[RMDB]
An RNA of 177 nucleotides, treated with 2A3 and DMS and read out base by base.
Conditions: 150 mM KOAc, 10 mM MgCl2 and 150 mM bicine (pH 8.5), 24 C.
Source: RMDB library OK1LIB, as collected in RNAgym.
RNA sequence: GGGAACGACUCGAGUAGAGUCGAAAAGGUAUCGAUUUCAAGGAGGACGGAAACAUUCUUGGACACAAGCUUGAGUACAACUACAACUCACACAAUGUGUACAUCAUGGCUGACAAGCAGAAGAACGUGUAUGCUUCUACUUCGGUAGAAGCAUACAAAAAGAAACAACAACAACAAC
Reactivity to 2A3 in 0.01 (KOAc 150mM, MgCl2 10mM, bicine 150mM(pH8.5), 24C), signal-to-noise 5, nucleotides 027 to 126: g130g010u110a070u120c070g070a090u030u080u060c070a060a040g030g010a040g040g020a080c060g030g050a020a040a030c060a010u090u050c030u020u030g050g030a010c000a010c010a120a020g000c010u010u040g020a000g040u030a030c080a220a020c080u100a040c040a170a080c050u140c060a060c020a020c040a160a150u140g010u000g000u090a020c010a040u070c000a020u100g080g000c010u040g030a040c020a010a050g070c030a010g060a130a000g050a060a020c040g010
Reactivity to DMS in 0.01 (KOAc 150mM, MgCl2 10mM, bicine 150mM(pH8.5), 24C), signal-to-noise 5, nucleotides 027 to 126: g000g030u020a030u000c000g000a050u000u000u020c040a090a110g000g000a070g000g010a070c090g040g000a080a090a060c090a120u000u030c030u020u000g000g000a110c110a040c040a030a070g000c080u020u000g000a060g010u000a040c070a060a100c120u050a060c240a100a070c070u010c070a050c120a030c090a090a060u020g020u020g000u010a030c050a040u000c080a030u000g000g000c010u000g000a110c170a040a110g050c130a040g000a070a070g000a050a080c260g020